RNA sequence: GGGAACGACUCGAGUAGAGUCGAAAAGAUAUGGAACGAGUGAGGCUCGGUAUCGGAAACGAUACGCGAGCUCUCGAUUCCUAAGUCAAAACUGUCUUAAGGAGGGUUCGCCCUCCUUAAGACAGAAUCAUGAUGUUACGUUCGCGUAACAUCAUGAAAAAGAAACAACAACAACAAC
Reactivity to 2A3 in 0.01 (KOAc 150mM, MgCl2 10mM, bicine 150mM(pH8.5), 24C), signal-to-noise 1, nucleotides 027 to 126: g000a000u050a060u100g000g000a030a000c000g000a000g070u300g250a140g010g100c010u000c010g000g000u020a000u010c000g020g000a150a020a000c020g000a000u070a080c030g030c000g040a000g000c000u000c000u000c000g020a100u000u010c010c000u020a190a020g060u000c030a000a000a110a210c000u000g000u030c010u020u010a000a000g010g000a000g030g030g030u010u190c130g110c000c000c000u000c000c000u000u010a000a000g000a030c010a000g000a010a010
Reactivity to DMS in 0.01 (KOAc 150mM, MgCl2 10mM, bicine 150mM(pH8.5), 24C), signal-to-noise 4, nucleotides 027 to 126: g010a040u010a300u000g010g010a020a010c010g000a020g020u000g020a190g020g000c000u000c000g010g020u010a000u000c000g010g000a110a100a190c000g010a010u000a010c010g030c010g010a010g000c000u000c000u000c000g000a160u000u000c000c000u000a070a130g000u010c050a090a080a140a220c000u000g000u000c000u000u000a010a010g000g000a020g000g010g020u000u030c280g010c000c000c000u000c000c000u000u000a000a000g000a000c000a000g000a020a060